Source: RMDB libraries RFM100 and RFMREP, as collected in RNAgym. Structure probing data (DMS and 2A3) for a 177-nucleotide construct.
RNA sequence: GGGAACGACUCGAGUAGAGUCGAAAACAUGAACGACUGAUGUAGAGUUCGAUUGGGGAGAUAAGUAUCUAAUGCGUGUCAUUAGGUCACCUCGGUAUGACUAGGGUGAGAGCUAGGAACCGUAGAGCCGUUGCAGGCUAUUCGUAGCCUGCAACGGAAAAGAAACAACAACAACAAC
Reactivity to DMS in 0.01 (KOAc 150mM, MgCl2 10mM, bicine 150mM(pH8.5), 24C), signal-to-noise 2, nucleotides 027 to 126: c080a150u000g010a040a030c060g010a100c040u010g050a190u000g000u010a100g000a250g000u000u000c050g000a150u000u010g000g040g030g000a060g000a110u030a030a200g010u050a030u000c060u000a120a020u000g030c070g000u060g020u030c000a040u000u000a000g000g000u000c000a090c030c020u020c010g020g000u030a030u010g000a220c180u050a070g000g000g000u000g000a040g000a220g020c050u000a020g050g000a090a040c000c020g020u020a040g000a100g000
Reactivity to 2A3 in 0.01 (KOAc 150mM, MgCl2 10mM, bicine 150mM(pH8.5), 24C), signal-to-noise 3, nucleotides 027 to 126: c020a070u140g040a020a000c000g090a040c140u110g080a110u170g040u100a010g010a000g060u060u040c010g010a120u050u130g030g010g020g000a090g000a100u060a140a030g050u080a080u000c000u000a000a000u020g010c060g140u250g130u190c010a010u000u000a010g000g000u000c000a040c020c010u010c040g000g000u130a100u100g110a060c030u050a050g000g050g000u080g020a070g000a000g000c010u010a010g020g030a050a030c000c040g070u250a060g010a020g140
Reactivities are given for positions 27 through 126.
2A3 adducts were read by reverse transcription with SuperScript II with manganese.